[RMDB]
RNA sequence: GGGAACGACUCGAGUAGAGUCGAAAAGAUAUGGACGGACUUUUGACGACCUGUGAUCGGAAACGAUCACAAGGUCGAUAAGUCCCAAGGUCCUAAGUCAAAAGUCAGAAUCUUCGGAUUCUGACAACUAUCUAGUCGACUUCGGUCGACUAGAUAGAAAAGAAACAACAACAACAAC
Reactivity to DMS in 0.01 (KOAc 150mM, MgCl2 10mM, bicine 150mM(pH8.5), 24C), signal-to-noise 2, nucleotides 027 to 126: g000a110u000a200u000g000g020a040c010g020g030a020c000u000u000u000u000g030a210c170g000a000c000c030u000g010u000g000a000u010c010g000g010a060a070a150c000g000a000u000c010a010c000a020a020g020g030u000c000g020a010u000a000a020g010u010c010c010c300a090a090g040g020u000c000c000u000a000a160g000u020c020a120a050a120a140g000u000c000a020g000a020a000u000c000u000u020c220g020g000a010u000u000c000u000g000a010c010a050a080